[RMDB]
RNA sequence: GGGAACGACUCGAGUAGAGUCGAAAACUCUGGCCCAUAUAUGCCGAAAAGGCAAGUUUUUUUGAUGUUAUAUAGGAAAAGUCAAAUGUCCGACAAAAUGAAAGGUCAAGUUAAGUGGUUCAACGAGGGGUAAGGUAUUUUUCGAAAUACCUUACCCAAAAGAAACAACAACAACAAC
Reactivity to DMS in 0.01 (KOAc 150mM, MgCl2 10mM, bicine 150mM(pH8.5), 24C), signal-to-noise 4, nucleotides 027 to 126: c020u010c100u000g020g000c010c000c040a110u020a080u030a050u020g020c000c010g000a070a070a070a130g000g020c010a050a070g010u010u010u000u000u000u000u000g010a090u010g020u010u010a070u020a090u010a110g000g000a050a040a040a190g010u010c090a050a070a050u010g020u020c020c020g020a120c140a060a050a070a050u010g000a050a060a050g010g000u000c030a040a100g000u000u010a080a090g000u010g000g010u000u000c050a030a050c140g010a110g010
Reactivity to 2A3 in 0.01 (KOAc 150mM, MgCl2 10mM, bicine 150mM(pH8.5), 24C), signal-to-noise 2, nucleotides 027 to 126: c000u000c030u000g000g070c010c000c120a030u040a000u000a010u120g000c090c000g000a140a190a300a000g000g080c000a000a020g000u160u100u100u000u000u000u200g030a040u030g080u150u050a120u000a020u090a070g260g000a120a000a000a060g090u000c020a040a040a300u160g080u100c010c110g030a080c040a040a300a010a040u180g110a110a000a110g070g000u040c030a050a000g000u020u000a000a130g000u040g200g070u010u100c100a030a090c100g120a180g000